[RMDB]
An RNA of 177 nucleotides, treated with DMS and 2A3 and read out base by base. The 2A3 profile rests on 720 reads. Source: RMDB library RFM100, as collected in RNAgym. For DMS, 1,179 sequencing reads were counted. For 2A3 the reverse transcriptase was SuperScript II with manganese. The reactions ran in a buffer of 150 mM KOAc, 10 mM MgCl2 and 150 mM bicine (pH 8.5), at 24 C.
RNA sequence: GGGAACGACUCGAGUAGAGUCGAAAAGAAAGAAAGACAUGAUCGACACCUUGGCUGAUGUAAAGCCGUCGCAGAUGGACGUUGAGUGGCGCACGCCGUGAAACCAACCCCCGCCUCGUCUGAUCAACCACACUCACGGUUUCGACCGUGAGUGUGGAAAAGAAACAACAACAACAAC
Reactivity to DMS in 0.01 (KOAc 150mM, MgCl2 10mM, bicine 150mM(pH8.5), 24C), signal-to-noise 1, nucleotides 027 to 126: g040a160a070a010g010a090a170a010g030a080c140a020u010g030a090u050c060g000a020c010a010c080c000u000u000g000g000c040u000g000a100u000g000u030a050a110a030g000c040c070g000u000c000g080c120a070g000a090u010g010g000a120c240g000u000u040g000a230g060u030g000g000c000g010c130a090c080g000c060c040g000u000g000a000a010a070c110c080a060a100c050c020c040c000c080g050c000c000u000c010g000u000c080u000g000a000u010c010a080a160
Reactivity to 2A3 in 0.01 (KOAc 150mM, MgCl2 10mM, bicine 150mM(pH8.5), 24C), signal-to-noise 2, nucleotides 027 to 126: g020a000a000a000g130a140a010a000g030a030c030a100u040g000a070u070c030g000a020c030a120c000c020u030u160g050g010c030u030g040a120u110g080u300a000a230a000g000c000c090g000u040c020g000c010a050g020a060u060g000g070a050c100g050u080u110g010a030g030u100g020g000c010g000c000a010c100g000c000c010g020u030g050a130a000a000c000c040a050a050c010c030c000c000c000g010c010c020u010c070g110u000c010u030g010a060u000c020a000a040